[RMDB]
Structure probing data (DMS) for a 177-nucleotide construct. DMS adducts were read by reverse transcription with MarathonRT. Values cover nucleotides 27 to 126. The DMS profile rests on 1,055 reads.
RNA sequence: GGGAACGACUCGAGUAGAGUCGAAAAGAUAUGGAUCCGUACCUGAGGUGUGCUCAAUGAUGCAACGUAACAUCAAUCGGAAACGAUUGUGGUUGUUGAGAGCCACCUCAGGUACGGAUCCUAAGUCGUUUAUGGCUCUGUUCGCAGAGCCAUAAACAAAAGAAACAACAACAACAAC
Reactivity to DMS in 0.01 (KOAc 150mM, MgCl2 10mM, bicine 150mM(pH8.5), 24C), signal-to-noise 1, nucleotides 027 to 126: g020a150u020a300u010g020g020a010u010c010c020g050u000a000c040c000u000g000a010g000g000u010g030u010g050c020u010c010a130a180u010g030a180u010g000c020a010a010c010g030u000a050a160c160a080u030c010a000a000u000c050g000g010a130a140a190c010g010a020u000u000g030u010g000g010u000u000g020u000u030g000a280g010a000g010c030c020a000c000c010u000c020a000g010g030u000a000c000g000g000a000u000c000c010u000a010a060g010u010c140